[RMDB]
RNA sequence: GGGAACGACUCGAGUAGAGUCGAAAAAGGUGCUUCGGCAGUCUGCCGGACUAUCUGCAGAUGGCAUGGGUCAGCGUCUACAAUCGGGAGCAGUGCGCCGCGGAUCGCGGUGUUUGGUUCGGACUCACUGCGUGGUACUAUUCGUAGUACCACGCAGAAAAGAAACAACAACAACAAC
Reactivity to 2A3 in 0.01 (KOAc 150mM, MgCl2 10mM, bicine 150mM(pH8.5), 24C), signal-to-noise 1, nucleotides 027 to 126: a000g050g000u040g000c010u050u050c020g050g000c040a080g090u110c090u080g000c050c010g000g020a040c050u050a100u060c000u020g040c030a030g010a110u120g040g000c070a070u030g020g110g000u030c030a020g010c020g110u020c010u020a060c060a050a080u080c010g090g000g000a050g040c010a000g030u020g020c030g010c030c010g040c020g050g070a190u190c090g020c000g050g000u040g000u020u000u100g010g000u040u030c000g010g020a000c020u000c080a060
Reactivity to DMS in 0.01 (KOAc 150mM, MgCl2 10mM, bicine 150mM(pH8.5), 24C), signal-to-noise 2, nucleotides 027 to 126: a120g020g010u010g020c110u000u000c010g020g010c010a100g030u000c140u010g010c030c040g000g000a070c090u010a020u000c020u000g000c130a070g000a100u010g030g020c050a060u010g030g000g020u010c020a110g000c090g030u000c050u000a070c090a080a110u000c050g000g000g000a080g000c050a060g000u000g000c050g020c010c000g010c010g010g000a100u000c080g030c010g000g010u000g020u000u010u010g010g010u010u010c040g000g000a150c070u000c090a150